[RMDB]
RNA sequence: GGGAACGACUCGAGUAGAGUCGAAAACAGUGGUACUACGGUACCACUGAAUAAAAGCGGAGUCAACCCUAACCCGCAAAGACUCCGCAGCGGGAAAGGGAAACGAUGGCUGUACGCAGCCAUCGAAGCAGUAUUUAGGAUUCGUCCUAAAUACUGCAAAAGAAACAACAACAACAAC
Reactivity to 2A3 in 0.01 (KOAc 150mM, MgCl2 10mM, bicine 150mM(pH8.5), 24C), signal-to-noise 9, nucleotides 027 to 126: c000a000g000u000g000g000u010a000c000u010a020c180g100g000u000a000c000c000a000c010u000g000a010a010u170a020a110a020a010g020c020g020g010a020g030u040c050a110a230c020c010c000u030a100a120c010c010c010g010c030a040a080a000g020a010c000u000c010c030g000c010a010g030c020g050g020g030a080a090a070g110g030g010a110a040a020c010g000a000u000g000g000c000u000g020u030a030c300g010c080a000g000c000c000a000u000c000g000a010a010
Reactivity to DMS in 0.01 (KOAc 150mM, MgCl2 10mM, bicine 150mM(pH8.5), 24C), signal-to-noise 6, nucleotides 027 to 126: c000a000g010u000g010g000u000a000c000u010a110c200g030g010u000a000c000c000a000c000u000g010a070a060u020a060a060a120a110g010c010g000g000a020g010u000c010a140a120c030c020c020u010a070a210c060c020c010g030c040a070a070a130g000a020c000u000c010c010g020c020a050g010c080g010g000g000a060a070a060g020g010g010a150a110a180c010g020a000u000g010g000c000u000g010u010a100c170g020c010a000g000c000c000a000u000c000g020a030a070